[RMDB]
RNA sequence: GGGAACGACUCGAGUAGAGUCGAAAAAUCUGUACUCAAUAUAAGACGAAGAAAUCCAGAGAUCAGAGUGAACUCAUCAAUGCAUUAGAUCAAAUGGUGAAAAACAACAACAAAAUUAUGGAGGAAAGACAACAAUAAACUUCGGUUUAUUGUUGUCAAAAGAAACAACAACAACAAC
Reactivity to 2A3 in 0.01 (KOAc 150mM, MgCl2 10mM, bicine 150mM(pH8.5), 24C), signal-to-noise 4, nucleotides 027 to 126: a000u000c030u070g040u060a080c000u010c030a120a020u080a030u040a300a090g100a020c110g070a080a170g060a040a050a060u010c030c020a020g000a000g010a090u080c020a010g050a020g140u030g080a080a080c040u010c080a130u050c070a080a080u160g040c030a030u110u100a110g030a100u070c010a010a130a120u080g000g010u060g030a040a000a060a020a000c080a030a010c010a020a000c020a010a090a070a010u140u160a130u120g040g030a060g020g070a090a030a000
Reactivity to DMS in 0.01 (KOAc 150mM, MgCl2 10mM, bicine 150mM(pH8.5), 24C), signal-to-noise 3, nucleotides 027 to 126: a120u020c000u020g020u010a160c030u030c010a090a080u040a110u020a080a070g000a090c160g000a080a110g000a060a130a070u040c010c050a000g000a210g010a050u000c010a040g020a060g040u000g000a050a080c120u030c110a060u020c210a070a070u030g010c070a030u060u050a040g000a020u040c040a010a110a120u000g000g010u000g000a040a050a070a080a070c100a090a090c150a050a160c120a060a090a010a080u020u040a040u000g000g040a070g010g000a080a100a060